[RMDB]
The record gives the reactivity of an RNA of 177 nucleotides to 2A3 and DMS. For DMS, 1,607 sequencing reads were counted. Values are in units of 0.01, from 0 to 300, in steps of 10. DMS adducts were read by reverse transcription with MarathonRT.
RNA sequence: GGGAACGACUCGAGUAGAGUCGAAAAGAUAUGGAGAACUACGAGUGAACUUGCGAAGAACGUGCUCGGAAACGAGCACGGGAGCAACCCCACUCGCUCCUAAGUCAAACCGUUCUUCGGAACGGAACUAAAAUAUAGCCUUCGGGCUAUAUUUUAGAAAAGAAACAACAACAACAAC
Reactivity to 2A3 in 0.01 (KOAc 150mM, MgCl2 10mM, bicine 150mM(pH8.5), 24C), signal-to-noise 1, nucleotides 027 to 126: g000a000u110a030u140g050g040a040g000a120a100c150u180a040c300g000a000g000u010g050a090a060c080u000u020g010c020g140a300a050g000a040a000c010g000u010g000c010u000c000g020g030a000a180a020c000g000a040g040c000a000c020g040g000g010a000g030c010a010a010c000c000c040c040a020c000u000c010g000c010u010c000c000u010a150a010g040u010c070a070a060a120c000c000g020u020u000c010u060u090c300g130g000a000a000c020g020g000a000a040
Reactivity to DMS in 0.01 (KOAc 150mM, MgCl2 10mM, bicine 150mM(pH8.5), 24C), signal-to-noise 2, nucleotides 027 to 126: g010a050u010a300u020g020g000a040g010a150a080c150u030a300c000g000a020g040u000g000a080a070c200u000u000g020c000g020a110a180g030a130a140c000g000u000g030c010u000c000g000g000a110a080a170c000g000a000g000c010a000c000g000g030g010a070g000c010a000a030c150c100c080c040a020c020u000c000g000c020u000c000c010u000a070a110g010u000c020a060a070a200c000c000g000u000u000c000u000u020c210g030g010a000a000c010g000g010a040a060